[RMDB]
Structure probing data (DMS and 2A3) for a 177-nucleotide construct. The data come from the RNA Mapping Database (RMDB), library TTRDES. The 2A3 profile rests on 4,761 reads. Conditions: 150 mM KOAc, 10 mM MgCl2 and 150 mM bicine (pH 8.5), 24 C. For 2A3 the reverse transcriptase was SuperScript II with manganese.
RNA sequence: GGGAACGACUCGAGUAGAGUCGAAAAGAUAUGGACCGUGGGAAGCGAUAAGAAGCAGUCGGAAACGACUGACCUUCUUUUGACGCUUCCACACGGUCCUAAGUCAAAACUUGGCUUCGGCCAAGAAGGAUCAUUAAGACUUCGGUCUUAAUGAUCCAAAAGAAACAACAACAACAAC
Reactivity to DMS in 0.01 (KOAc 150mM, MgCl2 10mM, bicine 150mM(pH8.5), 24C), signal-to-noise 3, nucleotides 027 to 126: g000a060u000a300u020g020g020a000c000c000g010u000g040g010g000a040a010g030c010g020a160u000a020a030g000a030a010g000c020a010g010u000c010g000g000a160a050a200c010g000a000c000u000g000a110c300c000u000u000c000u010u000u010u010g000a180c110g000c010u000u000c010c010a040c010a000c000g000g010u000c000c000u010a000a120g030u000c040a110a070a100a240c020u010u010g000g010c000u010u020c220g020g010c000c000a000a010g010a160a080
Reactivity to 2A3 in 0.01 (KOAc 150mM, MgCl2 10mM, bicine 150mM(pH8.5), 24C), signal-to-noise 2, nucleotides 027 to 126: g050a010u030a010u080g020g000a000c010c000g030u020g010g030g020a000a030g000c120g050a150u050a220a000g010a000a010g000c020a000g000u010c020g020g000a120a030a040c020g000a000c010u000g060a060c010c020u010u000c010u010u050u000u050g090a080c130g000c010u010u000c000c000a000c010a000c000g000g000u010c000c000u000a000a000g000u020c010a000a000a090a170c020u010u010g000g000c020u040u100c300g180g020c010c000a010a010g010a010a050